RNA sequence: GGGAACGACUCGAGUAGAGUCGAAAACCUUAAGGAUUCGUCCUUAAGGAAAAAACCGUAGGCUCCCGUACAGGGAGCGAGGAUCUUCGAAAGAGGAUACUCGCGACGAUCUGUACGGAGCCUAAACGGAAAAAAACAUCGCUUUCGAGCGAUGUAACUAAUCACUAUCUUUCGAGAUAGUGAUUAGAAAAGAAACAACAACAACAAC
Reactivity to 2A3 in 0.01 (KOAc 150mM, MgCl2 10mM, bicine 150mM(pH8.5), 24C), signal-to-noise 2, nucleotides 027 to 156: c000c000u010u000a020a000g010g000a020u040u090c190g060u010c060c010u000u010a000a010g000g000a110a060a040a010a000a020c000c000g000u010a020g010g000c010u090c080c070c060g000u000a000c000a000g000g000g010a000g000c000g010a000g000g000a000u010c000u020u000c020g070a120a100a060g010a010g000g000a000u010a020c000u000c000g000c000g030a170c000g000a020u010c000u000g010u000a000c010g000g000a000g010c000c000u000a000a000a000c000g010g040a030a030a010a010a040a020a030c000a010u010c000g000c020u080u110u190c300g090a010g000c000g000a000u010g000u000a010a010
Reactivity to DMS in 0.01 (KOAc 150mM, MgCl2 10mM, bicine 150mM(pH8.5), 24C), signal-to-noise 2, nucleotides 027 to 156: c000c000u000u000a030a010g000g010a070u000u010c300g040u000c000c000u000u000a010a040g010g000a000a020a060a140a060a080c020c010g050u010a020g020g000c000u000c050c030c040g000u000a000c000a020g000g010g010a050g000c000g000a000g000g010a020u000c010u000u010c020g010a270a150a300g000a030g010g000a020u000a010c000u000c000g040c000g010a090c170g010a060u000c000u000g000u000a010c010g000g010a030g020c000c000u000a000a030a010c010g030g030a000a000a060a130a080a140a060c000a010u000c000g020c000u000u000u020c300g010a050g050c000g050a010u000g010u010a000a120